[RMDB]
RNA sequence: GGGAACGACUCGAGUAGAGUCGAAAACUGUCCUAGAGACUUUAUCUGAGGCUAGGUGGGGAUCCAGAACAACGCUAUAGUCCUUUCUGUAUAUGUUAUAGUGCUGUCUUCCAGAAUGACUUAUUGUGGAUUAUAUAUGACUUCCAAUGAUGUAACAGACUGUCACUUGUUUCGACAAGUGACAGUCAAAAGAAACAACAACAACAAC
Reactivity to 2A3 in 0.01 (KOAc 150mM, MgCl2 10mM, bicine 150mM(pH8.5), 24C), signal-to-noise 2, nucleotides 027 to 156: c000u010g030u010c000c000u000a040g040a010g010a100c040u060u170u140a190u200c090u070g010a020g060g050c000u010a010g000g000u010g000g000g000g000a040u000c050c020a030g010a050a010c070a010a040c020g060c010u050a040u130a180g110u090c070c010u030u050u160c070u090g080u070a050u020a030u300g040u040u020a060u030a080g030u040g020c010u000g060u050c080u020u000c040c000a040g040a060a080u110g090a120c000u090u090a010u060u120g010u040g020g060a040u070u020a030u050a010u010a040u190g060a030c010u020u000c020c000a050a030u130g010a080u100g040u050a090a000c010a010
The record gives the reactivity of an RNA of 207 nucleotides to 2A3. For 2A3 the reverse transcriptase was SuperScript II with manganese. Conditions: 150 mM KOAc, 10 mM MgCl2 and 150 mM bicine (pH 8.5), 24 C. The 2A3 profile rests on 558 reads. Source: RMDB library OK3TST, as collected in RNAgym.